[RMDB]
RNA sequence: GGGAACGACUCGAGUAGAGUCGAAAAACAAAGCAUGGCUAGAAGAUGCCACCGCGGAUAGAGCUGAGGUACUCUAGACAUCUAGCCAGAAGAAUUCCCAAACCGCGGAGAGUGCUCUCGCAAAAAAGAUCUAAGUAGGAUUCGUCCUACUUAGAUCAAAAGAAACAACAACAACAAC
Reactivity to 2A3 in 0.01 (KOAc 150mM, MgCl2 10mM, bicine 150mM(pH8.5), 24C), signal-to-noise 4, nucleotides 027 to 126: a000c060a030a120a000g070c030a050u020g010g000c000u010a000g000a050a020g050a110u120g030c030c010a010c000c000g000c020g020g010a060u160a180g180a020g060c160u140g040a020g040g030u030a020c020u020c010u010a060g050a110c030a040u010c000u000a000g010c010c010a000g000a040a000g010a010a050u030u020c010c000c000a030a060a040c020c020g010c030g040g020a020g010a000g020u060g020c030u020c010u050c140g000c000a070a080a030a010a010a030
Reactivity to DMS in 0.01 (KOAc 150mM, MgCl2 10mM, bicine 150mM(pH8.5), 24C), signal-to-noise 5, nucleotides 027 to 126: a090c140a110a090a080g020c050a180u010g000g000c000u000a040g010a130a130g010a080u000g010c020c030a200c010c040g020c000g000g010a300u020a070g000a070g010c050u000g020a080g030g010u000a030c020u010c000u000a040g020a060c060a050u000c000u000a010g020c000c010a020g000a090a200g010a070a190u000u000c000c000c000a070a090a100c040c040g010c010g000g000a080g000a080g010u000g000c030u010c020u000c030g020c200a000a040a070a050a090a080
This 177-nucleotide RNA was probed chemically with 2A3 and DMS. As a SHAPE reagent, 2A3 marks flexible, mostly unpaired nucleotides at the ribose 2'-OH. The 2A3 profile rests on 7,964 reads. Values cover nucleotides 27 to 126. It was measured as part of the RMDB library M2PK90.